[RMDB]
RNA sequence: GGGAACGACUCGAGUAGAGUCGAAAAGAGAGUCACGACUUGCACGGGAUUUCUUUUUGGCGUACUGUCCACGGAAAGUUUCGUGUGGUUGGAAGGGUGAGUAAACCGUGUCGUGGCGGUUUUGCUCGCGGCCACUAUAGUUCGCUAUAGUGGCCGCAAAAGAAACAACAACAACAAC
Reactivity to 2A3 in 0.01 (KOAc 150mM, MgCl2 10mM, bicine 150mM(pH8.5), 24C), signal-to-noise 2, nucleotides 027 to 126: g100a010g010a000g040u000c010a000c000g010a020c000u030u190g000c030a000c020g050g000g000a030u050u040u010c000u000u110u030u020u080g030g000c050g000u150a240c110u230g090u100c040c000a000c010g020g060a040a050a160g090u000u020u020c010g000u050g010u070g000g070u050u040g090g060a100a090g040g060g010u090g040a040g000u050a000a040a040c000c000g010u000g000u040c040g010u030g000g060c000g000g000u000u000u000u020g050c000u010c000
Reactivity to DMS in 0.01 (KOAc 150mM, MgCl2 10mM, bicine 150mM(pH8.5), 24C), signal-to-noise 1, nucleotides 027 to 126: g000a040g000a080g000u010c110a070c030g000a000c010u020u010g000c000a030c000g000g000g010a000u020u000u000c020u050u000u020u010u020g000g000c040g050u070a130c300u050g000u010c030c000a010c300g020g040a010a000a020g040u000u000u000c000g000u000g030u000g000g020u000u000g010g050a140a240g010g000g000u000g010a050g000u000a000a000a010c000c010g000u000g000u000c070g010u040g020g020c030g000g000u000u000u000u000g080c000u000c000

This 177-nucleotide RNA was probed chemically with 2A3 and DMS. Conditions: 150 mM KOAc, 10 mM MgCl2 and 150 mM bicine (pH 8.5), 24 C. It was measured as part of the RMDB library OK1LIB. 2A3 adducts were read by reverse transcription with SuperScript II with manganese. For 2A3, 950 sequencing reads were counted.